The record gives the reactivity of an RNA of 207 nucleotides to 2A3.
The RNA was probed in 150 mM KOAc, 10 mM MgCl2 and 150 mM bicine (pH 8.5) at 24 C.
[RMDB]
RNA sequence: GGGAACGACUCGAGUAGAGUCGAAAACUACCACCCUAAGCCUAAAGGCAAGAGAAGGGAAAGAUAGCCAGAACUCAGCAUAGGUGCUUUCUGUGGUCUUUGAUGGAGGGACAGCAACUGCACAAGCAAUCUGACAAGAAAGAAGCCAAAGAAACAAACCAGUUUCACUUUUCGAAGUGAAACUGGUAAAAGAAACAACAACAACAAC
Reactivity to 2A3 in 0.01 (KOAc 150mM, MgCl2 10mM, bicine 150mM(pH8.5), 24C), signal-to-noise 2, nucleotides 027 to 156: c060u070a030c010c010a010c020c000c010u050a170a010g010c020c010u130a160a020a090g060g000c070a110a010g050a010g040a090a060g040g000g000a070a080a030g030a040u110a040g020c000c030a010g020a050a000c080u020c160a020g000c010a100u090a150g020g110u010g070c010u070u000u000c050u070g030u070g040g000u010c000u050u070u070g130a150u030g010g020a010g020g030g000a000c000a010g050c010a030a060c020u110g020c020a010c000a080a030g030c030a010a160u050c030u140g020a080c040a000a050g100a060a100a010g070a050a020g030c050c070a020a040a020g050a040a100a020c000a000a070